Structure probing data (DMS and 2A3) for a 177-nucleotide construct. The 2A3 profile rests on 7,521 reads. 2A3 adducts were read by reverse transcription with SuperScript II with manganese.
RNA sequence: GGGAACGACUCGAGUAGAGUCGAAAAGAUAUGGACGUGAACUACGCUUCCCCGAAGAACUUUAUCGGAAACGAUAAAGGGAGGAACAGCGCACGUCCUAAGUCAAAGGGUUAGUUCGCUAACCCAACUAUGAGGAUACGUUCGCGUAUCCUCAUAGAAAAGAAACAACAACAACAAC
Reactivity to DMS in 0.01 (KOAc 150mM, MgCl2 10mM, bicine 150mM(pH8.5), 24C), signal-to-noise 4, nucleotides 027 to 126: g000a020u010a300u000g000g000a010c000g000u000g010a090a060c030u010a180c150g000c100u010u000c030c010c020c030g030a110a110g030a160a290c010u000u010u010a000u000c000g010g020a070a060a120c010g010a000u000a000a000a000g010g000g010a070g020g000a040a060c150a020g000c300g010c010a010c010g020u010c000c000u000a020a090g010u000c040a080a100a130g030g010g000u000u000a000g010u000u000c240g040c010u000a010a010c010c000c000a050a050
Reactivity to 2A3 in 0.01 (KOAc 150mM, MgCl2 10mM, bicine 150mM(pH8.5), 24C), signal-to-noise 2, nucleotides 027 to 126: g030a010u090a050u160g000g010a000c020g020u010g020a170a150c110u150a050c270g040c020u100u080c040c040c010c040g150a240a100g030a120a030c000u020u010u010a000u000c010g000g060a070a020a040c010g000a010u000a000a010a010g050g010g020a170g000g060a130a130c080a150g000c030g000c020a000c000g000u010c000c000u000a070a020g060u040c050a110a050a150g000g000g010u010u000a010g010u020u080c250g010c150u000a000a020c000c000c000a010a000